The record gives the reactivity of an RNA of 207 nucleotides to 2A3. It was measured as part of the RMDB library OK3TST.
[RMDB]
RNA sequence: GGGAACGACUCGAGUAGAGUCGAAAAGUGUACGUUCACGAGUUCACGAGAUCGUACACUCACUCGUGAACACUCGUUCUCACGAUCGAGUUCGAGUUCGUACGUGUUCACACUCACGUGAACGAGUGUACGUACUCUCUCUCGAACGUGAACGAACCAGCGACAAUCCGUUCGCGGAUUGUCGCUGAAAAGAAACAACAACAACAAC
Reactivity to 2A3 in 0.01 (KOAc 150mM, MgCl2 10mM, bicine 150mM(pH8.5), 24C), signal-to-noise 2, nucleotides 027 to 156: g050u090g040u100a050c030g000u030u010c040a010c010g020a050g010u000u020c100a010c060g010a020g020a080u270c090g110u140a030c020a040c030u000c010a050c030u020c010g000u030g010a030a000c020a060c030u020c020g000u030u010c060u020c070a010c000g030a050u040c020g000a010g030u070u010c030g010a000g010u040u020c020g020u030a010c000g080u070g000u020u000c020a020c020a030c060u290c040a150c130g000u010g000a010a000c010g000a090g060u230g010u000a000c000g010u020a030c010u010c000u000c010u000c000u000c000g000a010a000c000g010u000g010a020a010c080g000a010a030c010
For 2A3 the reverse transcriptase was SuperScript II with manganese. For 2A3, 1,080 sequencing reads were counted.